[RMDB]
RNA sequence: GGGAACGACUCGAGUAGAGUCGAAAAAAGGAUGGGGGAAUUUUUUCUUAAUAGAGAAGGUGGUGACCGUUCAAGCAGAGGGCAUCGUAUCAGCAAAGGCAUGGAGGCUAGAUGGCCAGGCAGGCUCAAGAGACAGAGAAAUCCACACAAAGUGAGAAAAUACGUAAUCAUUCGUGAUUACGUAUUUAAAAGAAACAACAACAACAAC
Reactivity to 2A3 in 0.01 (KOAc 150mM, MgCl2 10mM, bicine 150mM(pH8.5), 24C), signal-to-noise 2, nucleotides 027 to 156: a000a000g020g000a030u050g000g020g010g020g030a010a030u080u060u010u000u040u140c050u130u230a250a220u130a110g030a000g010a070a020g000g050u060g000g010u030g030a060c020c020g020u070u090c060a090a000g040c020a020g030a050g030g000g000c020a030u060c060g050u040a090u060c030a010g030c040a040a080a000g050g000c020a010u080g000g020a010g030g000c000u010a030g060a140u050g030g000c030c000a020g020g040c020a010g020g000c000u010c020a000a020g000a010g010a050c010a000g030a030g030a020a050a040u020c040c000a040c000a000c030a090a100a030g040u070g030a040g130a030
Reactivity to DMS in 0.01 (KOAc 150mM, MgCl2 10mM, bicine 150mM(pH8.5), 24C), signal-to-noise 2, nucleotides 027 to 156: a110a020g050g000a030u000g030g010g020g030g000a050a000u000u020u000u000u000u000c010u010u040a080a160u000a110g010a100g010a050a070g010g040u000g000g010u000g010a070c070c020g020u000u000c060a070a090g020c070a070g020a120g020g000g010c020a040u000c080g010u000a060u010c040a080g010c020a090a060a060g030g030c070a060u000g020g020a120g010g010c030u000a060g030a100u000g010g020c040c020a060g010g030c020a050g000g030c010u000c030a020a080g000a110g020a100c060a060g010a100g020a020a090a100u010c010c040a040c070a070c060a060a050a120g030u010g020a190g000a090